[RMDB]
RNA sequence: GGGAACGACUCGAGUAGAGUCGAAAAGAUAUGGAUCGACGUGGAGUCACUAUCGGAAACGAUAGAAUGACUAUGAAGCGUUCGAUCCUAAGUCAAAGCAGAAGUCCACUUCGGUGGACUUCUGCAACCCUUUGUCAUACUUCGGUAUGACAAAGGGAAAAGAAACAACAACAACAAC
Reactivity to 2A3 in 0.01 (KOAc 150mM, MgCl2 10mM, bicine 150mM(pH8.5), 24C), signal-to-noise 2, nucleotides 027 to 126: g000a000u010a000u070g010g010a000u010c000g000a010c000g030u020g010g040a020g000u000c020a010c030u010a000u010c000g030g000a030a000a000c050g000a000u020a010g100a140a300u280g010a030c000u020a140u300g000a000a010g030c000g010u000u080c000g010a000u010c000c000u010a000a000g020u000c010a060a140a000g000c000a010g000a000a000g020u040c000c010a020c050u110u160c300g060g000u000g000g000a010c000u010u000c000u000g000c000a000a000
Reactivity to DMS in 0.01 (KOAc 150mM, MgCl2 10mM, bicine 150mM(pH8.5), 24C), signal-to-noise 1, nucleotides 027 to 126: g010a040u000a020u020g000g000a010u000c000g010a020c000g000u000g000g000a000g010u000c030a170c010u000a000u000c010g000g000a020a010a020c000g030a020u000a000g000a080a110u000g000a040c010u000a300u010g000a180a220g000c010g000u030u000c000g000a030u000c000c000u000a010a050g000u010c000a080a070a180g000c010a010g000a000a010g010u000c000c000a020c030u000u030c230g040g030u000g000g000a000c000u000u000c000u000g000c000a020a030
Chemical mapping of a 177-nucleotide RNA with 2A3 and DMS. Values cover nucleotides 27 to 126. For 2A3 the reverse transcriptase was SuperScript II with manganese. The reactions ran in a buffer of 150 mM KOAc, 10 mM MgCl2 and 150 mM bicine (pH 8.5), at 24 C. For DMS the reverse transcriptase was MarathonRT.